[RMDB]
RNA sequence: GGGAACGACUCGAGUAGAGUCGAAAAAUCCUGGCAUUCGUGCCAGGAUGUUUUCCGAGAAAGUCCCUCGGUAUAAAAGGGCAACCCUUGGAAACAAGGGAAUAAUCGCAGUGUUCGCACUGCGAAAGGCAUUAUGCAUCUUCGGAUGCAUAAUGCCAAAAGAAACAACAACAACAAC
Reactivity to 2A3 in 0.01 (KOAc 150mM, MgCl2 10mM, bicine 150mM(pH8.5), 24C), signal-to-noise 1, nucleotides 027 to 126: a000u010c010c010u000g010g000c000a020u010u090c120g090u070g000c000c000a000g000g010a000u020g010u010u110u040u000c010c000g000a030g020a110a060a000g120u070c000c000c000u020c040g050g020u250a140u120a190a150a000a000g000g000g000c020a030a030c000c000c010u000u010g000g000a010a040a010c000a000a000g050g000g040a020a040u140a030a010u020c010g000c000a010g020u000g040u040u110c120g040c050a000c000u000g000c000g000a010a010a000
Reactivity to DMS in 0.01 (KOAc 150mM, MgCl2 10mM, bicine 150mM(pH8.5), 24C), signal-to-noise 1, nucleotides 027 to 126: a010u000c000c000u010g000g040c010a010u000u000c170g020u000g000c000c000a020g020g000a000u000g010u000u000u000u010c000c010g010a160g010a060a030a050g020u010c000c010c000u000c020g000g010u030a050u010a090a060a120a010g020g020g000c020a230a080c000c000c000u000u000g000g010a260a100a190c010a000a030g000g000g030a040a000u000a120a260u010c010g010c010a020g010u000g000u010u030c200g000c030a020c030u000g000c000g010a000a030a070